An RNA of 177 nucleotides, treated with DMS and 2A3 and read out base by base. 2A3 adducts were read by reverse transcription with SuperScript II with manganese. DMS adducts were read by reverse transcription with MarathonRT. Reactivities are rounded to 0.1 and cut off at 0 and 3.
[RMDB]
RNA sequence: GGGAACGACUCGAGUAGAGUCGAAAACCGAUACAUAUAAAACAUGCAUUCUAUUCACUGUGCCAUCUGUCAAUUUGUUAGAUGAUCAGAGGGGAAAAGAAGAGCUAGAGCAAUGGUUACGGAAUGGAAUAGCAUGUUUUUUCGAAAACAUGCUAUUAAAAGAAACAACAACAACAAC
Reactivity to DMS in 0.01 (KOAc 150mM, MgCl2 10mM, bicine 150mM(pH8.5), 24C), signal-to-noise 9, nucleotides 027 to 126: c010c000g010a130u050a090c150a080u030a080u030a050a050a050a090c070a030u010g000c020a080u000u000c010u000a060u000u000c020a050c040u030g010u000g010c140c010a010u000c080u000g010u000c060a090a100u020u010u010g010u010u010a040g010a070u010g000a070u010c040a040g010a050g000g010g010g000a050a040a080a060g010a070a050g010a080g000c040u010a080g000a130g010c080a050a030u010g000g010u000u010a050c060g010g000a040a030u020g000g000
Reactivity to 2A3 in 0.01 (KOAc 150mM, MgCl2 10mM, bicine 150mM(pH8.5), 24C), signal-to-noise 3, nucleotides 027 to 126: c000c010g030a060u100a100c060a030u260a020u090a150a140a020a020c060a050u130g030c000a070u050u030c010u020a020u040u050c030a000c070u060g010u010g060c010c000a010u000c030u050g040u040c030a130a150u010u040u040g060u050u070a070g010a040u060g020a040u080c030a030g040a050g050g050g010g010a050a070a050a000g090a020a020g020a010g040c040u060a010g010a010g030c020a060a080u030g000g010u040u040a020c020g010g030a040a050u070g050g040